[RMDB]
RNA sequence: GGGAACGACUCGAGUAGAGUCGAAAACACAGGCGACUUUAUCGGAGAGCGGUUACACGCGAGGAAGAUGAAAUUAUUACAUCAGUAGACUCGAGAUUACUACAACUUGCGUUGCUAUCUCAAAUAAUCUUACCUGCUUAUUCGUAAGCAGGUAAGAAAAAGAAACAACAACAACAAC
Reactivity to 2A3 in 0.01 (KOAc 150mM, MgCl2 10mM, bicine 150mM(pH8.5), 24C), signal-to-noise 4, nucleotides 027 to 126: c110a000c020a040g120g030c020g010a050c040u050u110u070a080u140c040g070g070a020g000a020g070c060g010g010u060u090a060c060a010c040g000c010g010a020g010g030a040a170g000a040u050g050a060a110a050u300u260a150u070u160a070c010a000u010c020a020g040u040a020g060a060c040u040c080g060a080g020a100u090u120a050c020u000a010c000a080a020c000u010u020g020c010g010u030u050g000c020u040a050u080c000u000c000a020a140a060u170a040a070
Reactivity to DMS in 0.01 (KOAc 150mM, MgCl2 10mM, bicine 150mM(pH8.5), 24C), signal-to-noise 4, nucleotides 027 to 126: c110a090c220a090g000g020c010g030a070c030u000u000u000a050u010c080g010g010a130g010a090g030c070g000g020u000u000a130c130a060c030g000c030g000a020g010g000a140a110g010a030u000g010a090a090a080u020u000a090u010u000a100c040a030u010c020a100g010u000a030g010a130c100u010c100g010a110g010a110u000u010a120c020u000a020c050a140a100c020u000u000g000c060g020u000u010g000c070u000a100u000c010u000c040a050a050a100u000a030a080